[RMDB]
RNA sequence: GGGAACGACUCGAGUAGAGUCGAAAAGAUAUGGACUGACUCGCUCGGGAGCUGUCACAUCGGAAACGAUGUGUCAGCGAAGAACGAGCGAGGUCAGUCCUAAGUCAAAGUGCCGUUCGCGGCACAAGAUUGUAGGGUUCUUCGGAACCCUACAAUCAAAAGAAACAACAACAACAAC
Reactivity to DMS in 0.01 (KOAc 150mM, MgCl2 10mM, bicine 150mM(pH8.5), 24C), signal-to-noise 2, nucleotides 027 to 126: g000a060u010a300u000g000g000a040c020u000g000a030c000u000c030g000c000u000c000g020g000g000a040g000c000u020g010u000c000a010c000a000u000c010g000g000a140a130a180c000g030a020u000g000u000g000u000c000a010g010c010g020a040a200g020a140a190c020g020a020g020c000g010a000g030g000u020c010a010g010u000c000c010u000a010a090g020u000c070a090a110a140g000u000g000c000c000g030u000u010c260g000c020g000g020c000a010c010a040a100
Reactivity to 2A3 in 0.01 (KOAc 150mM, MgCl2 10mM, bicine 150mM(pH8.5), 24C), signal-to-noise 1, nucleotides 027 to 126: g050a010u110a030u220g010g030a000c000u010g000a000c010u010c000g030c000u020c030g000g000g000a030g010c020u040g000u010c000a000c010a000u020c010g000g050a090a060a040c030g000a000u000g010u020g000u000c000a030g000c000g030a270a020g010a030a010c020g010a000g030c020g000a010g000g010u020c000a000g000u000c000c020u010a010a020g000u000c020a020a040a150g000u000g030c030c010g000u080u060c300g000c000g160g000c010a000c000a000a010

Description: This 177-nucleotide RNA was probed chemically with DMS and 2A3. 2A3 adducts were read by reverse transcription with SuperScript II with manganese. High DMS reactivity at an A or C suggests that its Watson-Crick edge is free. Values cover nucleotides 27 to 126.